[RMDB]
RNA sequence: GGGAACGACUCGAGUAGAGUCGAAAAGCUGUCGGGAGAUGAGGGCUAGGAAAUCAGGGCUUCCCAAAGAAAAAGUGGGGUCUCAGGCGCACUUCCAUCUUGAGCCUAGGCAUUGAGGGAAUCACAAGCACACUAUAGGAUUCGUCCUAUAGUGUGCAAAAGAAACAACAACAACAAC
Reactivity to DMS in 0.01 (KOAc 150mM, MgCl2 10mM, bicine 150mM(pH8.5), 24C), signal-to-noise 3, nucleotides 027 to 126: g000c060u010g020u000c090g010g020g000a070g000a110u000g000a130g040g000g030c100u000a100g010g000a070a100a100u010c030a110g000g000g010c100u000u000c010c010c010a070a090a070g010a090a070a080a090a070g030u000g000g010g020g020u010c060u000c090a030g010g010c080g000c050a070c090u030u010c050c060a050u000c050u010u000g000a060g010c020c010u000a050g010g000c070a050u010u000g010a100g000g020g010a070a090u010c080a050c180a050a160
Reactivity to 2A3 in 0.01 (KOAc 150mM, MgCl2 10mM, bicine 150mM(pH8.5), 24C), signal-to-noise 2, nucleotides 027 to 126: g000c020u030g050u050c020g040g020g000a190g010a060u080g030a070g000g000g030c050u070a050g000g140a010a060a080u110c050a060g020g010g040c000u060u030c040c010c010a060a100a010g060a010a080a010a030a010g100u060g000g000g000g050u020c040u010c020a010g020g020c020g020c030a050c030u110u010c020c020a050u060c060u080u110g040a030g010c000c020u030a050g000g040c030a050u030u130g020a070g030g000g040a000a070u090c010a030c010a140a030
The record gives the reactivity of an RNA of 177 nucleotides to DMS and 2A3.
Reactivities are given for positions 27 through 126.
As a SHAPE reagent, 2A3 marks flexible, mostly unpaired nucleotides at the ribose 2'-OH.
DMS adducts were read by reverse transcription with MarathonRT.
Source: RMDB library OK2TRN, as collected in RNAgym.
The reactions ran in a buffer of 150 mM KOAc, 10 mM MgCl2 and 150 mM bicine (pH 8.5), at 24 C.